Background
Chemical mapping of a 177-nucleotide RNA with DMS and 2A3. The 2A3 profile rests on 11,207 reads. The RNA was probed in 150 mM KOAc, 10 mM MgCl2 and 150 mM bicine (pH 8.5) at 24 C.
[RMDB]
RNA sequence: GGGAACGACUCGAGUAGAGUCGAAAAUCGAUGCUCCAUCAGUUCGGAUUGCUGGCCAUGCUGAUGCUGUUCUUCCGAGUGAUGAUGUACAUCAGCCUGCGAAAGCGAUGCUAUGCCUGAUUUUGAACCGCGUACUAAUAUUCGUAUUAGUACGCGGAAAAGAAACAACAACAACAAC
Reactivity to DMS in 0.01 (KOAc 150mM, MgCl2 10mM, bicine 150mM(pH8.5), 24C), signal-to-noise 3, nucleotides 027 to 126: u020c080g020a080u020g000c040u010c040c010a030u020c020a050g010u040u040c060g000g000a050u010u020g010c040u010g000g000c070c070a090u000g020c020u020g000a080u010g000c110u010g000u020u010c060u000u000c030c030g020a140g000u020g000a010u000g000a080u010g000u030a160c030a010u000c000a050g000c020c020u000g000c040g000a060a130a070g010c040g000a030u000g030c000u000a060u020g060c060c010u010g000a120u000u000u010u030g020a150a110
Reactivity to 2A3 in 0.01 (KOAc 150mM, MgCl2 10mM, bicine 150mM(pH8.5), 24C), signal-to-noise 9, nucleotides 027 to 126: u120c050g040a050u080g040c050u030c040c000a040u020c020a040g060u100u070c020g010g040a060u030u060g020c030u060g040g040c080c010a070u110g020c030u050g030a090u060g000c050u100g100u140u010c020u030u000c000c020g110a080g110u120g010a060u010g010a010u070g060u120a030c000a020u000c000a000g020c000c030u030g000c030g060a110a010a000g010c030g030a040u090g040c020u040a030u160g030c010c020u110g070a180u070u040u070u140g060a060a050